[RMDB]
RNA sequence: GGGAACGACUCGAGUAGAGUCGAAAAUUGGAAUUCGACAGGUCGUUUAGAGCAUUGAUUGCGUUUCGCCAUCCGGGCGCAAAACGGGCAGAAAUUUUAACUGCAAAAAACGAAAACUCUUUCGCUAUCGCUGCCUAAAAACCAGUGAUGCGUAGCUCGAUAUUUUUCUGUUCGCAGAAAAAUAUCGAAAAGAAACAACAACAACAAC
Reactivity to 2A3 in 0.01 (KOAc 150mM, MgCl2 10mM, bicine 150mM(pH8.5), 24C), signal-to-noise 2, nucleotides 027 to 156: u140u110g120g040a040a080u070u010c030g020a020c040a030g000g030u030c030g020u040u050u070a070g010a010g000c040a050u090u160g010a080u060u100g040c000g040u050u120u170c020g000c020c000a010u020c030c010g020g000g000c040g000c060a000a000a010a050c000g010g020g010c000a020g120a020a090a050u140u170u110u180a050a120c000u000g000c000a000a000a020a020a020a050c110g070a050a030a060a070c030u060c030u100u120u040c030g000c020u110a020u060c010g000c010u010g000c000c000u030a060a050a010a000a000c000c000a000g000u010g010a010u010g020c020g010u020a020g030c010u000
Structure probing data (2A3) for a 207-nucleotide construct. It was measured as part of the RMDB library ARCHII. For 2A3 the reverse transcriptase was SuperScript II with manganese. Reactivities are rounded to 0.1 and cut off at 0 and 3. Reactivities are given for positions 27 through 156. The RNA was probed in 150 mM KOAc, 10 mM MgCl2 and 150 mM bicine (pH 8.5) at 24 C.